[RMDB]
RNA sequence: GGGAACGACUCGAGUAGAGUCGAAAAUCCUAAGUCUUCCGACAUGGUCUAAAACAGGCUAUGAAGUGGGUUCGGAAACGAACCCAUGGAGCCUGGAGUACGGACCAACAGCGGAAGAUAUGGAAAAUCUUGUAAAGGCUUCGGCCUUUACAAGAAACUACCUUUGUUUCUUCGGAAACAAAGGUAGAAAAGAAACAACAACAACAAC
Reactivity to 2A3 in 0.01 (KOAc 150mM, MgCl2 10mM, bicine 150mM(pH8.5), 24C), signal-to-noise 1, nucleotides 027 to 156: u000c010c000u010a080a000g010u000c000u000u000c000c000g080a170c120a120u070g000g000u000c000u060a010a010a050a100c010a000g010g000c000u040a270u300g040a020a010g000u000g000g010g010u000u000c000g030g000a000a090a000c010g000a000a060c020c040c000a000u000g000g000a000g020c000c030u000g000g000a040g060u050a040c160g000g000a000c000c010a000a010c030a020g020c010g020g010a000a000g000a000u030a030u040g000g000a000a080a040a130u000c000u020u000g000u000a020a000a000g000g000c020u040u170c300g050g000c000c000u000u010u010a000c000a000a010g010a000a000a000
Structure probing data (2A3) for a 207-nucleotide construct. The reactions ran in a buffer of 150 mM KOAc, 10 mM MgCl2 and 150 mM bicine (pH 8.5), at 24 C. Source: RMDB library RNAMAK, as collected in RNAgym. For 2A3 the reverse transcriptase was SuperScript II with manganese. Reactivities are given for positions 27 through 156.